[RMDB]
RNA sequence: GGGAACGACUCGAGUAGAGUCGAAAAGAUAUGGAUGAAAGGCGAUAAGAACCAUUCGGAAACGAAUGAAGUUCUUUUGACGCCUAUGUAGUCCUAAGUCAAAGCUCCCCUGUUCGCAGGGGAGCAAUCAUACCGUGUACUUCGGUACACGGUAUGAAAAAGAAACAACAACAACAAC
Reactivity to 2A3 in 0.01 (KOAc 150mM, MgCl2 10mM, bicine 150mM(pH8.5), 24C), signal-to-noise 2, nucleotides 027 to 126: g020a010u050a020u110g000g020a000u020g050a090a120a000g030g000c030g070a110u040a240a040g000a000a000c000c000a010u000u000c010g050g000a070a060a040c010g000a000a010u030g070a070a070g000u010u000c000u010u000u030u110g150a060c030g000c000c020u040a090u120g000u000a010g010u000c010c000u020a130a000g030u050c060a130a090a010g000c000u000c000c000c010c000u020g050u100u090c300g000c120a000g030g010g040g010a000g010c000a010a000
Reactivity to DMS in 0.01 (KOAc 150mM, MgCl2 10mM, bicine 150mM(pH8.5), 24C), signal-to-noise 3, nucleotides 027 to 126: g010a040u000a300u010g000g000a030u010g000a160a080a040g000g010c010g020a110u010a030a010g010a000a000c000c000a010u000u000c000g000g000a070a080a170c000g010a000a000u000g000a100a110g020u000u000c000u000u000u000u000g000a210c020g000c000c000u000a030u020g000u000a210g000u010c000c000u000a050a130g010u000c040a080a110a140g020c000u000c000c000c010c000u000g000u010u000c250g010c000a000g010g000g010g010a000g000c000a010a010